[RMDB]
An RNA of 177 nucleotides, treated with 2A3 and DMS and read out base by base. For DMS the reverse transcriptase was MarathonRT. The 2A3 profile rests on 4,851 reads. 2A3 adducts were read by reverse transcription with SuperScript II with manganese.
RNA sequence: GGGAACGACUCGAGUAGAGUCGAAAAGAUAUGGACAUAUUUCUGCUCCCUGGCACGUUGAAAUCGGAAACGAUGGAGUGCCCUGGAGCGAAGUAUGUCCUAAGUCAAACGUGCCUUCGGGCACGAACAUACGUUUACGCUUCGGCGUAAACGUAUGAAAAGAAACAACAACAACAAC
Reactivity to 2A3 in 0.01 (KOAc 150mM, MgCl2 10mM, bicine 150mM(pH8.5), 24C), signal-to-noise 2, nucleotides 027 to 126: g050a020u090a050u230g010g010a000c010a010u010a020u010u030u020c150u300g010c010u010c000c000c000u000g000g010c010a010c010g190u300u040g020a030a040a000u000c000g000g050a070a060a030c040g000a010u030g010g020a060g010u000g000c020c050c010u020g000g010a000g000c000g000a000a010g000u000a010u010g000u000c000c010u000a000a010g000u000c000a020a050a120c020g000u000g000c000c000u060u100c290g010g000g000c000a000c000g000a020a000
Reactivity to DMS in 0.01 (KOAc 150mM, MgCl2 10mM, bicine 150mM(pH8.5), 24C), signal-to-noise 2, nucleotides 027 to 126: g000a060u000a300u010g000g000a010c000a010u000a000u000u000u000c010u020g060c000u000c000c000c020u000g010g020c000a000c000g000u000u000g010a070a180a020u010c010g010g010a130a060a210c000g000a020u000g000g000a090g020u000g000c000c000c030u000g000g000a010g020c020g000a010a030g010u000a020u000g000u000c000c010u000a000a060g020u000c020a080a070a250c020g010u000g000c000c000u000u000c160g030g020g020c000a000c000g000a080a170